RNA sequence: GGGAACGACUCGAGUAGAGUCGAAAAUCAAACGAUUUCGAUCGUUUGAAACGGAGCACUCCUGCGGGAGUUAAGGCCAUACGGACAGCCGGGUCCACUGCCAGUCAUUCGGUUUCGACCGAAUGAACAAAGGGGAAGGCUUCGGCCUUCCCCUUUGAAAAGAAACAACAACAACAAC
Reactivity to DMS in 0.01 (KOAc 150mM, MgCl2 10mM, bicine 150mM(pH8.5), 24C), signal-to-noise 1, nucleotides 027 to 126: u000c000a000a020a010c000g010a040u000u010u010c210g010a040u000c000g000u000u010u020g010a020a080a080c070g000g000a080g010c120a040c020u000c020c000u000g030c180g010g000g030a040g030u000u010a040a130g000g000c040c030a100u000a180c180g000g000a070c090a100g000c000c020g010g010g010u000c000c040a080c170u000g000c090c040a170g000u010c000a000u000u000c000g010g010u000u000u020c190g010a010c010c000g030a000a000u000g010a060a160